[RMDB]
RNA sequence: GGGAACGACUCGAGUAGAGUCGAAAAGAUAUGGACAUUUCUCCGGCACAAUGAUGACUAAUCGGAAACGAUUAGUUUGAGUGCCAGGAGAGAAUGUCCUAAGUCAAAACAGCUGUUCGCAGCUGAAUCUUUAAUUUUCGUUCGCGAAAAUUAAAGAAAAAGAAACAACAACAACAAC
Reactivity to DMS in 0.01 (KOAc 150mM, MgCl2 10mM, bicine 150mM(pH8.5), 24C), signal-to-noise 3, nucleotides 027 to 126: g030a030u000a300u000g020g000a020c000a000u000u000u000c000u000c000c000g000g030c000a010c000a210a190u000g010a120u010g000a000c010u000a010a000u000c000g000g010a130a100a240c000g000a030u000u000a020g010u000u000u000g000a120g010u000g000c000c000a060g020g020a010g010a010g010a010a000u000g000u000c000c010u000a000a120g000u000c020a110a150a190a280c010a030g020c000u000g020u000u020c180g010c010a010g020c000u000g000a110a120
Reactivity to 2A3 in 0.01 (KOAc 150mM, MgCl2 10mM, bicine 150mM(pH8.5), 24C), signal-to-noise 2, nucleotides 027 to 126: g010a030u060a090u240g000g010a000c010a000u000u040u000c010u000c000c020g040g030c000a000c010a120a300u220g030a030u110g020a050c000u010a010a000u000c010g090g000a080a060a010c040g000a020u000u010a000g020u020u020u010g010a000g010u000g000c010c010a000g000g000a000g000a010g050a020a010u000g000u000c000c000u010a070a000g050u020c020a000a020a150a240c010a000g000c010u040g060u210u170c300g030c240a000g000c000u000g050a030a040